[RMDB]
RNA sequence: GGGAACGACUCGAGUAGAGUCGAAAACCAUCUUCGAGGAUUCUAGCCAAGUAUCUCUUUUGUGUGUGUUUAACGUAUACAAUAUAAUGGAAUAGAUUUUAUAGACUGGAUUUUUAUCAUAUUCCCCUCUGAGGUAAGCAUUCGUGCUUACCUCAGAAAAAGAAACAACAACAACAAC
Reactivity to 2A3 in 0.01 (KOAc 150mM, MgCl2 10mM, bicine 150mM(pH8.5), 24C), signal-to-noise 4, nucleotides 027 to 126: c000c000a020u070c010u090u100c070g140a050g030g000a060u050u000c010u030a000g020c000c010a080a020g050u030a120u030c110u000c010u030u040u080u000g020u000g000u000g000u010g060u030u100u170a100a040c020g000u020a000u010a030c020a040a010u100a010u040a120a130u080g010g000a020a090u020a050g010a010u040u020u020u050a150u040a040g030a030c070u020g080g010a120u050u040u000u030u080a090u130c050a040u020a060u100u030c000c000c000c000
Reactivity to DMS in 0.01 (KOAc 150mM, MgCl2 10mM, bicine 150mM(pH8.5), 24C), signal-to-noise 1, nucleotides 027 to 126: c000c000a070u020c150u010u000c130g030a110g000g000a080u020u000c030u000a060g020c050c000a140a070g000u070a030u010c140u030c070u070u040u000u000g000u010g010u030g000u000g000u030u010u020a050a090c040g000u000a030u000a050c030a030a030u030a000u090a030a050u030g000g020a120a130u000a050g000a010u010u000u020u000a030u040a060g010a040c120u000g040g000a160u010u000u000u020u050a070u110c070a060u010a150u000u000c010c060c000c280